This 207-nucleotide RNA was probed chemically with 2A3 and DMS. Reactivities are given for positions 27 through 156. DMS adducts were read by reverse transcription with MarathonRT. The 2A3 profile rests on 5,049 reads. The RNA was probed in 150 mM KOAc, 10 mM MgCl2 and 150 mM bicine (pH 8.5) at 24 C.

[RMDB]
RNA sequence: GGGAACGACUCGAGUAGAGUCGAAAAAGAGGAGGCUGGGUUUUGCGAUCUUUAAGUAGAUGGCAGGUUCACCCCGUACGGUGCGGAAGUUCGCGCUUCCGUGAAACGCGAAAAUCGGACGGUGGCUAAGACCAAUAACAGUUCGCUGUUAUUGGAAGUCUAUUCAAAGGUUCGCCUUUGAAUAGACAAAAGAAACAACAACAACAAC
Reactivity to 2A3 in 0.01 (KOAc 150mM, MgCl2 10mM, bicine 150mM(pH8.5), 24C), signal-to-noise 5, nucleotides 027 to 156: a000g050a030g040g010a030g020g000c060u040g030g060g010u030u060u090u110g020c020g030a030u030c030u040u130u090a180a180g110u050a070g040a050u050g050g020c020a010g040g020u060u070c030a060c010c010c000c010g010u030a030c020g030g020u050g010c000g010g010a010a010g010u100u180c060g020c030g000c090u000u020c000c000g000u020g030a100a090a020c070g020c020g060a080a040a000a060u050c000g010g010a010c020g000g040u060g010g010c010u040a080a020g030a060c000c000a000a000u000a000a000c000a000g010u040u060c120g040c110u000g000u000u010a000u000u000g000g000a000a020
Reactivity to DMS in 0.01 (KOAc 150mM, MgCl2 10mM, bicine 150mM(pH8.5), 24C), signal-to-noise 2, nucleotides 027 to 156: a110g000a100g020g000a060g020g020c050u000g010g000g030u000u000u000u010g000c040g010a080u000c010u010u000u010a060a170g000u000a050g000a060u000g020g030c020a050g010g000u000u000c030a130c000c010c010c010g060u000a030c000g000g010u010g040c070g010g010a070a050g050u000u000c190g020c300g030c000u000u010c030c100g000u000g010a050a050a040c030g010c020g000a080a060a090a040u000c050g020g000a040c010g040g010u000g030g010c030u010a060a100g020a220c000c000a020a030u010a020a020c020a030g030u000u000c300g020c010u000g020u000u000a010u000u000g000g000a020a070